[RMDB]
RNA sequence: GGGAACGACUCGAGUAGAGUCGAAAAUUACUGAAUCGCUCAUCGAUUGUGAGCCACUCAAUGAACUUGACUCGCUUACACUUUCUGAUUUUCUUAAUGACGUUGAGACGCUCAAUGAGCCAGAAUCCGAGAAUCACUGAUUCGUCAGUGAUUCUCGAAAAGAAACAACAACAACAAC
Reactivity to 2A3 in 0.01 (KOAc 150mM, MgCl2 10mM, bicine 150mM(pH8.5), 24C), signal-to-noise 4, nucleotides 027 to 126: u040u030a060c020u010g040a060a060u110c030g010c040u010c020a030u060c090g230a190u180u140g030u040g030a000g020c010c010a020c010u000c010a020a060u170g050a120a050c050u030u020g030a010c000u020c070g030c010u030u060a030c060a030c050u080u150u060c030u090g140a140u060u040u130u000c040u020u120a160a130u150g030a030c020g010u020u000g020a010g030a070c030g020c020u000c030a030a090u050g000a010g030c020c000a040g050a040a070u000c050
Reactivity to DMS in 0.01 (KOAc 150mM, MgCl2 10mM, bicine 150mM(pH8.5), 24C), signal-to-noise 3, nucleotides 027 to 126: u000u000a100c100u000g000a080a090u000c250g000c010u000c020a040u000c080g010a110u020u020g010u000g000a010g000c020c150a090c190u010c010a040a040u030g020a110a290c080u010u010g000a020c050u010c300g040c020u010u000a020c100a080c140u000u000u000c070u000g000a080u000u000u000u000c040u000u000a050a030u000g010a170c060g020u010u000g000a070g000a150c150g000c090u010c000a040a040u000g000a050g020c050c120a060g000a090a080u000c070
This 177-nucleotide RNA was probed chemically with 2A3 and DMS. The data come from the RNA Mapping Database (RMDB), library OK2TRN. For DMS, 2,126 sequencing reads were counted.